[RMDB]
RNA sequence: GGGAACGACUCGAGUAGAGUCGAAAAAUCGACUUUUUUGUCGCGCCGGAAGUACUGAUGGAAGGGGCGACCUCACGAAAAGUCAUUCAUGCCGGGAGAGAAUAAUAAUGGGAAAAGCUACUUAUACCUAGGUAUCAGCAUUCGUGCUGAUACCUAGAAAAGAAACAACAACAACAAC
Reactivity to DMS in 0.01 (KOAc 150mM, MgCl2 10mM, bicine 150mM(pH8.5), 24C), signal-to-noise 3, nucleotides 027 to 126: a060u030c110g000a010c000u010u010u010u000u000u000g010u000c000g020c030g010c020c000g010g000a300a110g010u000a090c300u060g040a040u000g020g010a300a200g000g000g030g020c040g010a010c010c300u020c110a120c140g010a010a030a000a040g010u000c010a060u000u020c080a080u000g000c020c010g000g000g000a050g020a070g000a060a040u010a050a020u040a040a060u030g030g000g020a040a020a060a130g000c070u000a050c050u020u010a070u040a060c210
Reactivity to 2A3 in 0.01 (KOAc 150mM, MgCl2 10mM, bicine 150mM(pH8.5), 24C), signal-to-noise 5, nucleotides 027 to 126: a000u150c080g010a020c070u100u030u010u000u030u180g010u040c020g000c070g210c040c040g030g040a030a020g040u190a220c120u300g140a170u120g020g030a030a060g020g000g010g000c000g000a020c000c030u090c020a100c060g000a030a010a000a000g020u000c010a000u030u090c020a010u070g030c000c010g020g050g010a040g000a030g080a020a050u110a100a010u070a030a030u060g070g040g000a060a120a000a020g010c010u080a030c020u200u130a110u050a190c020